[RMDB]
RNA sequence: GGGAACGACUCGAGUAGAGUCGAAAACGAAGCAAUGGCACAGUCCUAGGCAUCGUUCCUGCAUCCAAUGUCGAAGCAAUGGCGCAAUCCUAGGCAUCGGCAGUGUAGAAGCAAUGGCGUAGACCUCGAAUGCAAAGAGCUUCGGCUCUUUGCAUUCAAAAGAAACAACAACAACAAC
Reactivity to DMS in 0.01 (KOAc 150mM, MgCl2 10mM, bicine 150mM(pH8.5), 24C), signal-to-noise 1, nucleotides 027 to 126: c030g010a070a080g000c010a070a060u010g000g000c000a200c200a090g000u000c010c030u030a100g000g020c030a080u000c010g000u000u000c040c010u000g010c050a110u000c070c030a060a010u010g060u000c040g010a080a130g000c030a060a070u010g020g000c100g000c280a080a060u000c010c010u010a140g000g000c030a090u000c050g030g000c000a020g000u020g020u000a090g010a040a080g000c070a090a040u000g030g020c150g000u000a070g000a130c010c000u020c170
Structure probing data (DMS) for a 177-nucleotide construct. For DMS the reverse transcriptase was MarathonRT. For DMS, 787 sequencing reads were counted.